[RMDB]
Structure probing data (2A3 and DMS) for a 177-nucleotide construct.
For DMS, 1,618 sequencing reads were counted.
For 2A3, 1,716 sequencing reads were counted.
Conditions: 150 mM KOAc, 10 mM MgCl2 and 150 mM bicine (pH 8.5), 24 C.
As a SHAPE reagent, 2A3 marks flexible, mostly unpaired nucleotides at the ribose 2'-OH.
For 2A3 the reverse transcriptase was SuperScript II with manganese.
RNA sequence: GGGAACGACUCGAGUAGAGUCGAAAACUUAGCCAUCCGAGGUUGGACGUUGUCCUUCCUUCGGAUGCCCAGGUCGGACCGCGAGGAGGUGGAGAUGCCAUGCCGACCCGAAGAGGAAAGAAGGACGGUUACAGCGUAAGUUCGCUUACGCUGUAACAAAAGAAACAACAACAACAAC
Reactivity to 2A3 in 0.01 (KOAc 150mM, MgCl2 10mM, bicine 150mM(pH8.5), 24C), signal-to-noise 2, nucleotides 027 to 126: c010u070u090a010g050c040c000a000u000c010c010g010a010g010g060u000u020g010g020a060c290g300u180u300g010u040c000c000u020u020c000c000u100u090c010g000g000a000u010g000c020c020c020a010g000g040u020c000g030g020a080c000c050g020c050g050a110g020g020a070g000g000u080g000g030a170g030a060u190g050c050c010a030u060g020c000c020g010a050c060c010c000g070a120a050g050a010g010g040a130a010a000g050a030a030g070g010a020c040g020
Reactivity to DMS in 0.01 (KOAc 150mM, MgCl2 10mM, bicine 150mM(pH8.5), 24C), signal-to-noise 1, nucleotides 027 to 126: c060u000u000a020g030c170c010a030u000c000c010g020a030g000g010u000u000g010g010a010c000g010u020u010g020u000c010c010u000u010c000c000u000u010c000g000g010a010u000g000c090c000c000a040g000g000u010c000g010g000a140c000c080g030c070g010a090g000g000a110g000g030u010g030g000a150g000a060u010g000c050c070a040u000g030c040c010g000a060c030c010c040g000a030a050g020a080g000g010a080a030a060g000a070a050g010g000a040c160g000